RNA sequence: GGGAACGACUCGAGUAGAGUCGAAAAGAUAUGGACUUUGGUAGGGAGCCUAAGGCUCGGAAACGAGCCGAUGGGCUUUGAUCUACCCAAAGUCCUAAGUCAAAAUCGUGAUGUUCGCAUCACGAAACAGAUGAACUGAGUUCGCUCAGUUCAUCUGAAAAGAAACAACAACAACAAC
Reactivity to DMS in 0.01 (KOAc 150mM, MgCl2 10mM, bicine 150mM(pH8.5), 24C), signal-to-noise 3, nucleotides 027 to 126: g010a020u000a300u010g000g010a010c000u010u000u010g000g010u000a030g020g000g000a020g030c000c000u020a150a300g010g000c000u010c000g000g010a080a080a210c010g010a020g030c000c010g000a150u020g010g000g010c010u010u010u010g000a030u000c020u010a030c130c030c100a030a010a010g010u000c000c000u000a010a100g010u000c050a120a080a120a140u000c000g030u000g000a020u000g010u000u020c210g040c010a020u000c000a000c000g000a020a060a200
Reactivity to 2A3 in 0.01 (KOAc 150mM, MgCl2 10mM, bicine 150mM(pH8.5), 24C), signal-to-noise 2, nucleotides 027 to 126: g020a010u030a020u100g000g000a000c000u000u100u070g050g000u020a020g000g070g020a040g010c030c000u050a080a050g010g000c000u000c010g000g010a070a060a010c010g020a000g050c060c010g000a000u090g010g000g000c000u130u000u030g000a010u000c010u020a010c000c000c010a080a040a000g000u000c000c000u000a030a010g040u020c020a000a000a010a300u040c010g010u000g000a000u020g080u080u150c300g020c080a000u000c010a000c000g000a040a000a010